[RMDB]
RNA sequence: GGGAACGACUCGAGUAGAGUCGAAAAUUAAUUAUAUGCAUCAACCUCAAGUUGAAAAUAUCUUAAGUUUUUGCGGCUUAUUAAGGUGAAUGCAUAGAAUUAAAGGAGAUGACAUAUAUUUUAUGUGCAAUAAGUUAGCAUUCGUGCUAACUUAUUGAAAAGAAACAACAACAACAAC
Reactivity to DMS in 0.01 (KOAc 150mM, MgCl2 10mM, bicine 150mM(pH8.5), 24C), signal-to-noise 8, nucleotides 027 to 126: u010u010a010a010u000u000a050u000a010u000g000c000a010u000c170a170a040c000c000u000c210a030a030g010u000u000g000a060a030a030a030u010a030u020c140u040u040a110a150g010u010u000u000u000u010g010c050g020g000c010u000u000a080u030u030a110a020g010g020u000g000a160a020u000g000c000a010u000a010g000a020a010u000u000a010a040a110g000g020a110g010a080u010g000a030c020a010u010a020u020a090u020u020u010u010a020u000g010u000g010
Reactivity to 2A3 in 0.01 (KOAc 150mM, MgCl2 10mM, bicine 150mM(pH8.5), 24C), signal-to-noise 9, nucleotides 027 to 126: u020u010a000a000u010u020a020u000a000u030g000c000a000u010c040a050a100c000c010u030c050a010a010g020u020u030g090a050a030a020a030u180a080u110c090u180u180a230a160g060u080u020u010u050u140g190c030g020g000c010u040u060a060u100u180a240a010g010g000u000g040a090a010u000g000c000a000u000a010g010a000a000u020u020a020a030a040g150g040a130g060a080u190g030a040c030a010u070a010u020a090u100u180u130u060a030u060g040u020g020
This 177-nucleotide RNA was probed chemically with DMS and 2A3. It was measured as part of the RMDB libraries RFM100 and RFMREP. DMS adducts were read by reverse transcription with MarathonRT. The reactions ran in a buffer of 150 mM KOAc, 10 mM MgCl2 and 150 mM bicine (pH 8.5), at 24 C. Reactivities are given for positions 27 through 126.